The record gives the reactivity of an RNA of 170 nucleotides to DMS and 2A3. The RNA was probed in 150 mM KOAc, 10 mM MgCl2 and 150 mM bicine (pH 8.5) at 24 C. For DMS, 28,132 sequencing reads were counted. Source: RMDB library 15KLIB, as collected in RNAgym. 2A3 adducts were read by reverse transcription with SuperScript II with manganese.
[RMDB]
RNA sequence: GGGAACGACUCGAGUAGAGUCGAAAACCGAGCGAAGGGUCCGCGUGGGGAGGAAACGCAACCCGAGAGUGAGAUGAACGACAAGGGGCGAAGAUCCUCGGAAGGAAUUCUCCCAAGAAGCGAAGAGAGAGAGACUGGUUCGCCAGUCUCAAAAGAAACAACAACAACAAC
Reactivity to DMS in 0.01 (KOAc 150mM, MgCl2 10mM, bicine 150mM(pH8.5), 24C), signal-to-noise 9, nucleotides 027 to 129: c000c000g030a040g000c130g030a080a050g020g030g010u020c040c070g060c090g010u060g010g050g070g000a020g010g020a000a040a040c120g010c060a070a080c050c020c020g030a080g030a080g020u050g010a060g040a080u000g030a170a060c080g040a130c090a080a030g000g030g020g020c140g000a100a010g000a090u020c030c030u010c070g000g000a070a040g040g020a040a120u020u010c020u030c000c000c000a080a060g030a080a090g000c130g020a060a060g010a080g040a000g030a140
Reactivity to 2A3 in 0.01 (KOAc 150mM, MgCl2 10mM, bicine 150mM(pH8.5), 24C), signal-to-noise 8, nucleotides 027 to 129: c000c010g000a020g010c060g070a070a040g020g000g000u050c030c020g050c030g030u100g010g040g010g000a030g030g000a030a040a020c070g010c050a020a050c010c000c020g040a040g010a010g030u110g030a060g010a080u110g020a060a040c040g040a020c050a060a100g040g020g010g000c050g020a030a010g010a040u020c000c020u010c010g020g030a030a010g010g010a010a000u110u010c030u030c020c000c000a010a060g060a020a010g020c050g030a080a000g040a020g020a000g000a010